The record gives the reactivity of an RNA of 207 nucleotides to DMS and 2A3. The 2A3 profile rests on 5,015 reads. For DMS, 7,950 sequencing reads were counted. The RNA was probed in 150 mM KOAc, 10 mM MgCl2 and 150 mM bicine (pH 8.5) at 24 C.
[RMDB]
RNA sequence: GGGAACGACUCGAGUAGAGUCGAAAAGAACGUGCCUAUGAUGAGAUUAAAAGCAAAGGUCGUACUCAAGUAUUUGGCAAUCAUGUUUACACUAGUGACUAUGUAAAAAAAGCUAAGGCAUGGUACGGGGAUAAGUUUUCUGUAGAAAAGCUGACUCGUCUCAGAUAAAUUUCGAUUUAUCUGAGACAAAAGAAACAACAACAACAAC
Reactivity to DMS in 0.01 (KOAc 150mM, MgCl2 10mM, bicine 150mM(pH8.5), 24C), signal-to-noise 4, nucleotides 027 to 156: g030a080a050c060g010u000g000c000c020u000a110u000g020a120u000g010a110g010a170u010u000a060a090a130a140g040c050a070a100a120g030g010u010c050g020u000a090c050u000c040a040a130g020u000a080u010u000u010g010g010c040a060a090u010c050a070u000g010u000u010u000a070c070a050c100u010a100g020u000g010a120c060u000a060u000g020u010a000a000a040a060a060a090a160g010c030u000a040a070g020g010c030a060u000g020g010u000a050c040g000g010g020g000a060u000a040a040g010u000u000u000u000c030u010g010u000a110g000a050a070a050a120g030c040u000g000a060c070u000c080
Reactivity to 2A3 in 0.01 (KOAc 150mM, MgCl2 10mM, bicine 150mM(pH8.5), 24C), signal-to-noise 6, nucleotides 027 to 156: g060a050a020c030g020u060g000c000c020u090a070u120g040a040u060g010a020g040a080u150u220a120a110a070a030g030c070a100a060a030g040g020u030c040g030u040a040c020u020c070a070a020g030u020a130u060u060u070g020g000c010a020a030u050c020a040u080g090u080u100u070a060c090a050c090u060a050g050u020g080a030c030u030a050u160g030u250a020a070a020a020a020a030a020g000c010u030a040a020g030g000c010a000u020g020g000u030a020c060g020g010g000g010a030u020a100a030g010u000u020u040u060c040u040g050u040a020g050a060a060a030a010g010c020u040g020a050c020u040c070